RNA sequence: GGGAACGACUCGAGUAGAGUCGAAAAGCUCUACUUCGGUAGAGCAAGCAGCGUACUACCAAAGUGCAUCGAUCUGCAGAACUACACUAAUCCCAAAUAGGAUUAGUGCUGCAGGGAGCAUAUUUGGUAUCGCAUCAUGACUUGGUUCGCCAAGUAAAUUCAUGCUCCUUUUCGAAGGAGCAUGAAUAAAAGAAACAACAACAACAAC
Reactivity to DMS in 0.01 (KOAc 150mM, MgCl2 10mM, bicine 150mM(pH8.5), 24C), signal-to-noise 1, nucleotides 027 to 156: g020c000u010c000u000a060c000u000u000c140g040g070u010a000g010a050g080c010a010a010g020c100a110g000c040g020u000a090c150u000a000c010c000a010a010a030g030u000g040c020a260u000c150g040a060u000c010u000g010c000a140g010a090a170c050u000a240c000a010c000u000a000a020u000c000c000c060a050a180a220u000a050g000g000a010u000u000a000g000u000g000c000u000g000c020a000g000g010g000a060g000c010a010u010a060u000u000u000g000g020u000a030u000c010g000c020a160u000c090a100u010g000a060c000u000u010g000g040u000u010c270g080c030c010a030a040g000u000a010a180
Reactivity to 2A3 in 0.01 (KOAc 150mM, MgCl2 10mM, bicine 150mM(pH8.5), 24C), signal-to-noise 5, nucleotides 027 to 156: g000c010u000c000u000a000c010u020u090c220g110g000u010a000g030a010g000c010a020a020g050c050a000g000c020g120u130a120c040u010a000c010c000a010a000a000g010u000g000c030a240u190c080g130a090u050c020u020g000c000a010g010a090a030c120u270a030c160a000c000u000a000a000u020c030c080c020a150a270a260u230a090g000g020a000u000u000a000g000u010g000c010u000g000c000a010g000g010g010a010g000c000a010u050a300u030u000u010g000g000u020a000u280c000g020c010a010u130c040a050u090g060a000c000u020u020g000g020u110u060c170g040c110c000a010a020g000u060a040a120
Chemical mapping of a 207-nucleotide RNA with DMS and 2A3. For 2A3, 2,691 sequencing reads were counted. The RNA was probed in 150 mM KOAc, 10 mM MgCl2 and 150 mM bicine (pH 8.5) at 24 C.